This 207-nucleotide RNA was probed chemically with 2A3 and DMS. The RNA was probed in 150 mM KOAc, 10 mM MgCl2 and 150 mM bicine (pH 8.5) at 24 C. DMS adducts were read by reverse transcription with MarathonRT.
RNA sequence: GGGAACGACUCGAGUAGAGUCGAAAAGAAACUCGUUUCGCAUUGGCUGCCUAAUUCAAGGAAUUAGCGUGCCUUCAUGCUAAGGGUUUGAUAUCUGCUAAAACCCGGUGCAUUCAUCAAUGCAGGUCUCAUCCAAAUGCCUUCGGGCAUUUGGAAAUCACGGGAUUCAAUUCGUUGAAUCCCGUGAAAAAGAAACAACAACAACAAC
Reactivity to 2A3 in 0.01 (KOAc 150mM, MgCl2 10mM, bicine 150mM(pH8.5), 24C), signal-to-noise 2, nucleotides 027 to 156: g050a000a070a010c010u040c060g060u030u080u050c060g010c010a000u030u090g000g000c030u080g000c050c030u020a020a030u050u030c120a300a140g200g070a030a000u010u010a000g010c060g100u020g000c020c000u090u120c070a030u040g000c010u010a020a050g000g010g000u020u000u010g010a000u000a050u040c050u020g030c000u040a020a060a090a100c000c010c000g000g010u080g040c050a100u050u250c020a070u090c050a100a120u100g010c000a010g000g040u030c050u020c040a110u040c010c010a010a000a000u000g000c010c010u050u090c190g050g000g060c020a000u000u000u020g000g000a040a000a000
Reactivity to DMS in 0.01 (KOAc 150mM, MgCl2 10mM, bicine 150mM(pH8.5), 24C), signal-to-noise 1, nucleotides 027 to 156: g020a130a020a050c030u010c000g000u000u010u000c150g040c030a100u000u010g020g010c000u000g010c090c010u000a000a090u010u000c040a150a210g060g010a130a010u000u000a020g000c010g040u010g000c010c020u000u000c070a040u010g030c000u000a170a140g030g040g010u010u000u000g000a190u000a010u000c070u000g010c100u000a090a090a090a070c010c010c000g020g160u020g020c010a040u010u010c050a100u020c090a060a230u000g010c000a060g000g030u000c060u000c000a190u000c000c010a000a040a020u000g010c040c000u000u000c300g040g020g050c010a000u020u000u030g000g000a000a030a040
2A3 adducts were read by reverse transcription with SuperScript II with manganese.